[RMDB]
RNA sequence: GGGAACGACUCGAGUAGAGUCGAAAAAGUGGGAGGGGACAUGGGGAAUGGAGAUGGUCCCUCACCUUCCUGGGGCCUCCUGCUCUACGCUACCCCCUCGGGAGCCUCCUGUCCCCAGGGCAGGCCCCUAAUCAGUUCGUUUCGACGAACUGAUUAGAAAAGAAACAACAACAACAAC
Reactivity to 2A3 in 0.01 (KOAc 150mM, MgCl2 10mM, bicine 150mM(pH8.5), 24C), signal-to-noise 2, nucleotides 027 to 126: a000g110u180g030g030g030a080g020g020g010g030a010c020a090u090g020g010g000g020a050a140u180g070g020a100g030a090u150g070g000u020c000c020c020u030c050a150c010c060u060u060c010c020u020g000g010g020g000c000c020u040c000c030u050g020c030u040c000u100a180c060g000c040u170a270c030c020c000c000c000u010c000g000g010g000a020g000c010c000u020c000c000u010g040u070c000c010c010c000a000g000g000g000c010a000g020g050c030c000c000
Reactivity to DMS in 0.01 (KOAc 150mM, MgCl2 10mM, bicine 150mM(pH8.5), 24C), signal-to-noise 4, nucleotides 027 to 126: a090g030u010g010g010g010a120g020g000g010g010a040c060a030u010g010g000g010g000a100a090u000g010g000a050g000a060u000g030g020u010c000c010c000u000c080a060c060c050u000u010c030c000u010g000g000g000g000c030c020u010c050c040u010g000c000u000c030u000a080c070g000c090u000a300c060c010c010c010c030u000c050g010g010g000a050g010c010c080u000c010c000u000g010u010c000c010c010c010a110g000g010g010c190a050g010g000c030c010c020